[RMDB]
RNA sequence: GGGAACGACUCGAGUAGAGUCGAAAAAGGUUCAACCCUGUGCUCCCUGCCGUGGCCCUGCACAAUCUCCCGUGGGGGCUAAGGGGUUGUCUGCAGUUGUCAUCAGGGGAGAUGGGCUCCGCAGGGGGUGUUUCUAAACUUUCGAGUUUAGAAACACAAAAGAAACAACAACAACAAC
Reactivity to 2A3 in 0.01 (KOAc 150mM, MgCl2 10mM, bicine 150mM(pH8.5), 24C), signal-to-noise 1, nucleotides 027 to 126: a000g070g000u110u110c010a050a080c020c000c000u030g110u130g060c010u030c030c000c000u060g010c100c040g050u040g060g040c000c030c000u070g020c110a040c030a160a070u000c000u010c020c010c010g160u030g000g020g010g000g010c070u050a020a030g040g000g040g010u070u230g040u060c020u040g120c060a130g040u170u130g070u050c020a030u030c040a080g110g000g000g020a020g000a030u050g020g000g040c050u050c060c000g000c020a030g000g010g050g030
Reactivity to DMS in 0.01 (KOAc 150mM, MgCl2 10mM, bicine 150mM(pH8.5), 24C), signal-to-noise 3, nucleotides 027 to 126: a080g010g000u000u000c100a100a120c060c010c010u010g010u010g010c040u000c010c000c000u010g010c060c080g040u000g000g000c010c050c010u010g040c140a160c300a150a260u000c000u000c000c000c010g010u000g000g000g000g000g020c040u010a060a120g020g000g020g010u010u010g000u000c040u000g000c140a060g010u000u000g010u010c020a030u010c030a090g000g000g000g010a040g000a040u000g000g030g010c000u000c120c190g020c020a010g010g020g020g000